[RMDB]
RNA sequence: GGGAACGACUCGAGUAGAGUCGAAAAAGUCCAGUACGCUGGACAACCAUUCAUAUCCUUCACAGUGUUCCUAAUAGAUAGUUAUUAUUACACUAUCUUUAGCAACACUUUUGAGAUAAGGAUGGAAGACUAAGGUCUGCUUCGGCAGACCUUAGUCAAAAGAAACAACAACAACAAC
Reactivity to 2A3 in 0.01 (KOAc 150mM, MgCl2 10mM, bicine 150mM(pH8.5), 24C), signal-to-noise 2, nucleotides 027 to 126: a010g040u000c000c000a000g010u040a000c280g000c120u010g000g020a020c020a000a020c020c000a000u020u030c000a000u000a020u060c000c030u050u130c020a060c000a050g040u010g000u010u040c030c000u050a060a050u140a140g030a020u000a000g090u000u050a170u210u100a230u150u210a190c110a000c020u000a000u000c000u000u000u000a000g000c000a000a000c000a030c000u000u000u020u030g080a050g000a000u000a020a070g010g000a000u000g000g000a080a080